[RMDB]
RNA sequence: GGGAACGACUCGAGUAGAGUCGAAAAUAUUCCUUCCCAGCAAACGAAAGGAAAGCGCGACAACACGCAUUCGGAAUGGGCCAGAACAAGACGCACAGCUAAAUGCUAAUUACUUACAACUCAAUGACCACUGAUCAUUAUUCGUAAUGAUCAGUGGAAAAGAAACAACAACAACAAC
Reactivity to DMS in 0.01 (KOAc 150mM, MgCl2 10mM, bicine 150mM(pH8.5), 24C), signal-to-noise 5, nucleotides 027 to 126: u000a180u000u000c010c020u000u000c010c000c010a160g010c180a090a060a100c100g000a070a070a080g010g000a010a070a070g020c050g010c040g010a070c100a070a060c070a090c080g010c050a080u000u010c080g020g010a090a080u000g010g010g020c030c050a060g010a050a090c090a060a080g030a050c070g020c060a060c070a060g000c050u010a050a080a090u000g020c040u000a060a050u010u030a070c090u020u000a060c120a050a070c110u010c100a080a100u000g000a250
Reactivity to 2A3 in 0.01 (KOAc 150mM, MgCl2 10mM, bicine 150mM(pH8.5), 24C), signal-to-noise 5, nucleotides 027 to 126: u130a040u030u070c010c000u010u020c030c010c000a000g010c030a070a070a050c070g070a120a040a040g070g030a070a040a020g040c040g000c020g080a050c030a150a000c030a020c040g000c020a020u060u050c030g010g050a060a060u060g040g020g000c030c010a030g010a070a030c040a090a000g060a040c030g000c020a020c020a060g010c010u090a110a100a040u090g010c020u040a050a100u080u050a080c040u050u080a050c030a110a040c060u050c110a030a180u100g050a090